[RMDB]
RNA sequence: GGGAACGACUCGAGUAGAGUCGAAAAGAUACAUUGUGAUGAGCAUAUAUCAAUGCUGCGGCCAAGUGGUGGCAUUUGUCCAUGCCUUUUGGGCAGGCACAAUAAUUUUUAUCAAUGCUUCCAUCAAAAGAGGUGGACAAUUCGUUGUCCACCUCUUAAAAGAAACAACAACAACAAC
Reactivity to DMS in 0.01 (KOAc 150mM, MgCl2 10mM, bicine 150mM(pH8.5), 24C), signal-to-noise 1, nucleotides 027 to 126: g000a050u000a100c190a030u000u000g000u000g000a080u000g000a050g010c000a000u040a030u060a140u000c070a100a030u000g020c030u000g000c060g000g000c020c050a090a130g020u010g000g000u050g000g050c000a010u010u000u000g000u040c040c010a020u060g020c000c020u000u000u000u060g040g050g000c130a010g000g020c140a060c110a000a020u000a040a000u000u000u020u000u000a100u060c030a000a100u000g020c060u060u000c000c000a080u040c300a040a200
Reactivity to 2A3 in 0.01 (KOAc 150mM, MgCl2 10mM, bicine 150mM(pH8.5), 24C), signal-to-noise 2, nucleotides 027 to 126: g040a010u170a070c140a190u120u100g030u040g050a100u010g090a010g100c150a000u150a000u000a000u070c060a040a000u150g000c000u040g010c020g120g110c050c040a110a000g090u060g100g000u000g000g000c090a000u000u000u260g000u000c000c010a070u060g000c060c000u110u300u090u180g070g000g000c000a000g020g000c030a000c170a090a120u140a000a040u120u080u010u020u060a210u100c190a110a000u000g060c000u050u000c000c000a010u000c000a000a000